Chemical mapping of a 177-nucleotide RNA with 2A3 and DMS. Values are in units of 0.01, from 0 to 300, in steps of 10. High DMS reactivity at an A or C suggests that its Watson-Crick edge is free. The reactions ran in a buffer of 150 mM KOAc, 10 mM MgCl2 and 150 mM bicine (pH 8.5), at 24 C.
RNA sequence: GGGAACGACUCGAGUAGAGUCGAAAAUAAAUAACUCGCCCGCCUUAUCGCGGGCAAACCAGCUACGAGAGAUAAGGAUUUGGCGCCGAGAUAAGGUGGAGAUGUUUCUCCGCCGCGCGGCACUAAAAGUACCAGGAUUAUUCGUAAUCCUGGUACUAAAAGAAACAACAACAACAAC
Reactivity to 2A3 in 0.01 (KOAc 150mM, MgCl2 10mM, bicine 150mM(pH8.5), 24C), signal-to-noise 6, nucleotides 027 to 126: u110a010a070a010u120a080a050c030u040c080g030c000c010c000g050c020c010u100u100a080u080c040g020c020g020g000g000c010a000a000a010c010c020a020g060c020u130a140c090g040a080g020a010g010a120u020a110a020g080g010a060u080u020u160g070g010c040g000c010c020g060a050g030a090u080a060a050g020g000u010g020g000a000g000a000u170g190u150u280u010c000u000c000c000g000c000c000g000c020g000c010g020g010c020a010c010u070a060a030a000
Reactivity to DMS in 0.01 (KOAc 150mM, MgCl2 10mM, bicine 150mM(pH8.5), 24C), signal-to-noise 4, nucleotides 027 to 126: u050a070a080a080u040a080a140c090u010c120g000c020c010c070g010c000c030u000u030a050u010c170g040c010g030g000g000c020a000a000a090c060c090a080g020c030u010a050c060g000a040g010a160g010a060u020a030a030g000g000a150u000u010u020g020g000c050g010c000c000g010a080g000a050u020a070a120g010g020u000g000g020a010g000a040u020g000u040u040u020c000u010c000c000g020c000c010g000c090g010c020g000g000c010a060c040u010a020a030a040